[RMDB]
RNA sequence: GGGAACGACUCGAGUAGAGUCGAAAAUUUACUCAUUCAUUCAUUCAUUAGUUGGGUGUCGCAGCACACGCCUGUAGUUCUAGCUACUCAGAUUCUGUGCCAGGCACUGUGUGAGGCUUCAGGGGGAUCAUGGCAAGCUAGACAAAUGCUGUCCCUACCCAUUUAAAUCCUUCGGGAUUUAAAUGGGAAAAGAAACAACAACAACAAC
Reactivity to 2A3 in 0.01 (KOAc 150mM, MgCl2 10mM, bicine 150mM(pH8.5), 24C), signal-to-noise 1, nucleotides 027 to 156: u090u050u100a080c060u030c040a050u120u020c010a040u080u060c010a030u100u010c040a080u060u190a110g100u110u170g030g010g000u040g030u100c060g020c040a020g070c060a030c010a000c020g080c000c000u020g020u070a060g000u100u020c040u070a010g030c030u030a050c000u040c060a000g030a140u190u030c020u100g050u010g010c020c040a120g100g020c100a020c150u060g000u010g030u040g070a060g040g000c010u050u080c090a030g060g020g000g000g030a050u080c050a090u060g030g000c040a040a000g030c000u010a000g000a030c030a000a130a000u030g000c000u030g020u040c000c000c000u020a010